Notes:
This 207-nucleotide RNA was probed chemically with 2A3 and DMS. The reactions ran in a buffer of 150 mM KOAc, 10 mM MgCl2 and 150 mM bicine (pH 8.5), at 24 C. Source: RMDB library M2RFPK, as collected in RNAgym. For 2A3, 1,861 sequencing reads were counted. Reactivities are given for positions 27 through 156. DMS (dimethyl sulfate) methylates the pairing face of unpaired adenines and cytosines.

RNA sequence: GGGAACGACUCGAGUAGAGUCGAAAAGAAAGUUCAAGCAAACUAGCCGGCAAAAAAGCAAACUUGACCACCAAGGAUAAAAGAGAUCUUAUCCAAGGAUGCAAAAGAUAAUCUCACUUUUGACACCAAAACAGGGAGUAGUUCGCUACUCCCUGAACUUUAUUUGUUCGUUCGCGAACAAAUAAAGAAAAGAAACAACAACAACAAC
Reactivity to 2A3 in 0.01 (KOAc 150mM, MgCl2 10mM, bicine 150mM(pH8.5), 24C), signal-to-noise 1, nucleotides 027 to 156: g030a040a060a020g030u070u070c060a020a020g010c040a010a030a100c010u030a020g020c010c040g060g000c100a060a090a020a040a020a010g020c040a080a060a030c040u030u040g030a050c020c000a020c020c000a030a030g010g000a030u020a020a050a010a020g100a010g020a020u030c020u030u030a000u000c000c010a020a030g020g000a030u060g000c000a000a020a030a000g030a020u070a120a080u080c040u040c050a040c000u060u000u020u010g070a090c050a060c060c060a040a070a060a060c020a000g000g000g000a000g010u020a000g000u010u040c120g010c070u000a000c000u020c010c000c000u000g000a000a000
Reactivity to DMS in 0.01 (KOAc 150mM, MgCl2 10mM, bicine 150mM(pH8.5), 24C), signal-to-noise 2, nucleotides 027 to 156: g000a130a060a080g010u000u000c000a040a160g060c020a050a090a130c020u000a120g010c040c010g000g010c080a000a040a090a110a110a070g010c030a090a110a030c020u010u000g020a130c070c010a140c030c020a050a300g000g000a040u000a030a020a040a040g000a240g010a110u010c080u000u000a020u000c020c000a060a260g020g010a070u020g030c010a020a010a050a050g000a130u000a070a090u000c060u000c050a160c030u000u000u000u000g010a130c040a070c000c020a040a060a040a180c000a050g030g010g000a040g020u000a030g010u000u010c290g000c000u010a030c000u000c000c000c010u000g000a000a040